[RMDB]
RNA sequence: GGGAACGACUCGAGUAGAGUCGAAAACUUUUGCUGUCCGUCUCGCCUUGUCAGGGGACGCACCCAUGUGGCUUUCCUCCCAUGUCCUUUGGGAGCGGGAUUAUGGUGCAGUGGUUUAGGAUGUAUGGAGCCAAACUGCAGGGGUCUGAAUCCUGGACGAUAUUACUGGGUUCGCCCAGUAAUAUCGAAAAGAAACAACAACAACAAC
Reactivity to 2A3 in 0.01 (KOAc 150mM, MgCl2 10mM, bicine 150mM(pH8.5), 24C), signal-to-noise 3, nucleotides 027 to 156: c020u140u110u120u210g020c040u100g020u060c030c020g050u020c020u020c060g110c020c060u090u130g120u170c080a060g000g000g020g030a010c020g010c020a050c010c020c010a070u120g050u130g130g000c080u080u090u050c010c000u030c030c010c000a020u090g170u220c060c070u070u060u050g020g040g020a060g010c040g000g000g010a030u090u090a100u180g000g000u070g020c030a020g060u040g090g000u020u060u100a060g020g000a060u080g000u130a090u100g050g010a010g020c040c020a050a080a010c040u070g000c020a030g030g000g010g000u030c040u050g000a060a020u040c020c020u010g010g010a000
Reactivity to DMS in 0.01 (KOAc 150mM, MgCl2 10mM, bicine 150mM(pH8.5), 24C), signal-to-noise 1, nucleotides 027 to 156: c030u010u030u000u000g020c010u000g050u000c010c020g010u010c010u020c040g030c030c020u020u010g010u020c070a070g080g030g020g000a180c070g000c080a070c010c040c020a100u000g050u010g000g030c070u000u010u000c050c030u000c000c000c000a040u000g010u000c080c040u000u000u000g020g020g010a070g050c070g030g000g020a060u010u000a150u010g020g000u000g030c020a070g030u000g000g040u000u000u000a100g030g000a080u000g010u000a080u010g020g020a110g020c010c030a050a070a070c030u010g000c000a110g010g010g030g000u000c040u000g010a110a110u010c010c030u000g020g010a300
This 207-nucleotide RNA was probed chemically with 2A3 and DMS. For DMS, 3,062 sequencing reads were counted. The reactions ran in a buffer of 150 mM KOAc, 10 mM MgCl2 and 150 mM bicine (pH 8.5), at 24 C.